The data come from the RNA Mapping Database (RMDB), library M2RFPK.
Structure probing data (DMS and 2A3) for a 207-nucleotide construct.
For 2A3, 985 sequencing reads were counted.
Conditions: 150 mM KOAc, 10 mM MgCl2 and 150 mM bicine (pH 8.5), 24 C.
RNA sequence: GGGAACGACUCGAGUAGAGUCGAAAAACCGGCGGUAAAUCAACUCAGUUGAAAGCCGCGAGCGCUUUGGGUGCGAACUCAAAGGACAACAGAUCCGGUGUAAUUCCGGGGCCGACGGUUAGAGUCCAAAAGAGGUUAUCGUUCGCGAUAACCUCAACUUGUUAUCAGUGUUCGCACUGAUAACAAGAAAAGAAACAACAACAACAAC
Reactivity to DMS in 0.01 (KOAc 150mM, MgCl2 10mM, bicine 150mM(pH8.5), 24C), signal-to-noise 1, nucleotides 027 to 156: a000c000c000g010g000c000g030g000u000a030a080a200u000c060a030a120c000u030c110a200g060u000u000g010a110a080a300g010c000c040g000c070g040a090g040c040g020c070u000u000u000g020g010g010u000g000c300g030a240a060c040u000c000a000a000a020g000g000a070c010a170a090c070a090g000a120u000c010c010g000g040u000g020u010a110a300u000u000c000c000g000g000g000g000c030c020g000a000c000g000g000u000u020a170g000a240g010u000c040c000a060a030a110a140g000a010g000g010u000u010a020u000c000g000u000u000c220g000c020g000a020u020a000a010c000c020u000c000a000a000
Reactivity to 2A3 in 0.01 (KOAc 150mM, MgCl2 10mM, bicine 150mM(pH8.5), 24C), signal-to-noise 1, nucleotides 027 to 156: a000c010c000g050g010c010g010g030u110a150a190a210u080c020a030a090c060u120c300a190g000u010u020g080a170a090a020g050c030c010g090c070g050a070g000c050g020c000u030u050u040g000g040g030u070g030c080g030a080a010c000u010c010a000a000a020g000g040a050c000a000a040c010a100g100a110u040c000c010g000g010u000g030u050a050a030u110u000c000c000g000g000g000g040c010c020g030a000c010g000g020u000u020a070g030a030g110u020c010c010a020a020a020a120g000a000g000g000u010u000a000u000c020g000u000u100c240g010c000g050a000u000a000a000c020c000u000c000a000a000